[RMDB]
RNA sequence: GGGAACGACUCGAGUAGAGUCGAAAAUACUCUUUCAUUGCUCACAACUUUCAAUUCUAUCGUGAAAACCGGAAUUCAAGUUGGAAGAAUUCCAUUCGCCAUAAUCUGUCAUUAAAUAAACAAUUCACACCACUAAUUUAUUCGUAAAUUAGUGGUGAAAAGAAACAACAACAACAAC
Reactivity to DMS in 0.01 (KOAc 150mM, MgCl2 10mM, bicine 150mM(pH8.5), 24C), signal-to-noise 4, nucleotides 027 to 126: u000a100c070u010c030u020u000u010c030a070u000u000g030c050u000c060a100c050a050a080c050u010u000u000c070a010a050u010u010c040u000a080u010c090g030u000g010a080a050a120a110c130c140g000g020a010a000u000u000c060a040a120g000u010u010g010g010a100a120g000a040a050u000u000c030c010a130u000u000c050g020c020c050a080u010a060a060u000c070u000g000u000c040a060u010u020a040a080a080u010a040a070a080c100a080a120u020u000c130a140
Reactivity to 2A3 in 0.01 (KOAc 150mM, MgCl2 10mM, bicine 150mM(pH8.5), 24C), signal-to-noise 5, nucleotides 027 to 126: u070a020c020u010c000u050u100u050c060a080u050u110g000c010u030c010a090c010a040a070c030u050u140u110c020a010a080u010u040c020u060a090u130c040g030u020g090a010a010a070a090c070c050g000g000a010a010u010u020c020a080a030g100u100u060g120g030a050a040g020a020a050u060u000c010c000a020u070u040c030g020c020c010a040u050a110a080u070c050u080g040u040c030a080u090u220a070a100a070u190a080a110a010c040a030a050u170u080c060a030